[RMDB]
This 207-nucleotide RNA was probed chemically with DMS and 2A3. DMS adducts were read by reverse transcription with MarathonRT. The data come from the RNA Mapping Database (RMDB), library RNAMAK. The 2A3 profile rests on 7,506 reads. Values cover nucleotides 27 to 156. The RNA was probed in 150 mM KOAc, 10 mM MgCl2 and 150 mM bicine (pH 8.5) at 24 C. 2A3 adducts were read by reverse transcription with SuperScript II with manganese.
RNA sequence: GGGAACGACUCGAGUAGAGUCGAAAACGCUGGGUGCGUAACAUCUAGUGUGGAGCGAAGAACGUCUGAAGCGCGCACGGACGGGAGCUCCACCUAGUGGCACCUGUGCUGAAGCGCGCACGGCAACCGAAAGGUGCGGUCCCAGAAUUCGUUCUGGAUUUAAGAUUAAAUUCGUUUAAUCUUAAAUAAAAGAAACAACAACAACAAC
Reactivity to DMS in 0.01 (KOAc 150mM, MgCl2 10mM, bicine 150mM(pH8.5), 24C), signal-to-noise 3, nucleotides 027 to 156: c030g040c010u000g020g020g020u000g000c010g000u000a020a090c050a050u000c000u000a010g010u020g030u010g010g000a060g020c000g020a120a200g010a160a300c020g000u000c000u020g010a040a070g050c020g040c000g010c000a300c060g000g000a020c010g030g010g010a120g050c030u000c000c020a010c000c000u000a010g020u010g010g020c000a030c010c000u000g040u000g040c030u020g010a070a060g010c020g040c020g010c000a300c000g000g010c040a070a070c000c020g000a140a170a140g020g020u000g020c010g010g000u000c020c000c010a080g010a070a100u000u000c120g010u000u000c010u000g010g000
Reactivity to 2A3 in 0.01 (KOAc 150mM, MgCl2 10mM, bicine 150mM(pH8.5), 24C), signal-to-noise 4, nucleotides 027 to 156: c010g010c000u010g010g010g000u000g000c010g010u010a010a000c020a300u120c000u030a040g010u050g010u010g280g000a030g000c020g110a300a020g000a040a000c000g000u000c000u040g080a250a050g010c000g000c000g000c010a020c010g000g020a000c000g010g000g000a010g010c010u000c000c000a000c000c000u000a000g000u000g010g000c000a000c000c000u000g000u000g000c010u020g020a150a060g000c000g000c000g000c000a010c010g000g000c000a010a010c010c000g050a100a050a050g000g000u000g000c010g000g020u030c000c000c000a020g130a070a190u300u290c130g020u070u010c020u060g040g050